[RMDB]
RNA sequence: GGGAACGACUCGAGUAGAGUCGAAAAAGCAACAAAAAGUAAAGAGAAACCGUGCCGCGAGCACCGCACGCGUCUCUUGUAUUGUCACGCGUUGCGCGGCUACAAUCGGCCGCAUCGUGGAGCAGGCCAUGGCUCCAGGAUUCGUCCUGGAGCCAUGAAAAGAAACAACAACAACAAC
Reactivity to 2A3 in 0.01 (KOAc 150mM, MgCl2 10mM, bicine 150mM(pH8.5), 24C), signal-to-noise 5, nucleotides 027 to 126: a000g050c050a010a020c050a020a100a060a020a020g200u290a150a080a000g150a030g030a080a060a000c030c010g020u070g010c050c010g050c070g060a020g020c090a040c060c020g010c000a000c000g050c060g090u010c000u010c000u060u070g070u110a160u030u190g060u110c020a000c060g010c020g040u080u180g060c050g010c010g040g020c000u040a040c110a140a170u160c070g010g000c000c000g000c000a050u020c000g000u010g030g010a030g030c030a020g000g020c010
Reactivity to DMS in 0.01 (KOAc 150mM, MgCl2 10mM, bicine 150mM(pH8.5), 24C), signal-to-noise 4, nucleotides 027 to 126: a090g030c100a050a040c130a050a060a080a110a070g000u010a080a040a030g000a030g000a070a100a080c120c010g000u020g000c020c060g040c080g020a010g020c100a030c130c150g000c040a010c000g000c200g000u000c070u000c000u010u000g020u010a050u020u020g020u010c190a040c060g000c160g000u020u010g000c040g020c020g010g000c000u010a100c160a070a060u010c140g000g010c000c000g010c020a040u030c030g010u000g010g010a110g010c020a110g000g020c120